[RMDB]
RNA sequence: GGGAACGACUCGAGUAGAGUCGAAAAGAUAUGGAUCCUAAGUAGGGAGAAGGUCGGAAACGACCCUUCUUUGAUCUACGAUGGGAUCCUAAGUCAAAAGAGGUAAAGUGUUCGCACUUUACCUCAACACCUCAGAGAUGUUCGCAUCUCUGAGGUGAAAAGAAACAACAACAACAAC
Reactivity to DMS in 0.01 (KOAc 150mM, MgCl2 10mM, bicine 150mM(pH8.5), 24C), signal-to-noise 2, nucleotides 027 to 126: g000a020u000a300u040g000g000a020u000c000c000u000a080a300g020u000a020g000g010g000a010g000a030a010g010g000u000c000g000g000a070a050a130c000g000a010c100c090c070u000u000c000u000u000u020g000a070u010c010u000a000c000g010a250u020g010g010g010a010u000c000c000u000a000a070g010u000c030a060a040a110a120g000a000g000g000u000a000a000a000g000u000g000u000u000c210g020c000a000c000u000u000u000a010c000c000u000c000a010a080
Reactivity to 2A3 in 0.01 (KOAc 150mM, MgCl2 10mM, bicine 150mM(pH8.5), 24C), signal-to-noise 1, nucleotides 027 to 126: g020a000u060a020u090g000g000a000u000c010c000u020a020a040g010u010a000g030g010g060a000g000a020a000g030g030u020c040g050g000a080a020a030c030g030a030c080c020c020u000u040c030u140u140u070g060a120u060c010u010a030c010g030a180u290g020g040g000a000u020c000c000u000a010a000g020u000c020a000a010a100a150g020a000g000g000u000a000a000a000g000u010g030u100u210c200g010c080a010c000u000u000u000a000c000c020u010c000a000a000
Chemical mapping of a 177-nucleotide RNA with DMS and 2A3. It was measured as part of the RMDB library TTRDEL. High DMS reactivity at an A or C suggests that its Watson-Crick edge is free. For 2A3, 2,040 sequencing reads were counted.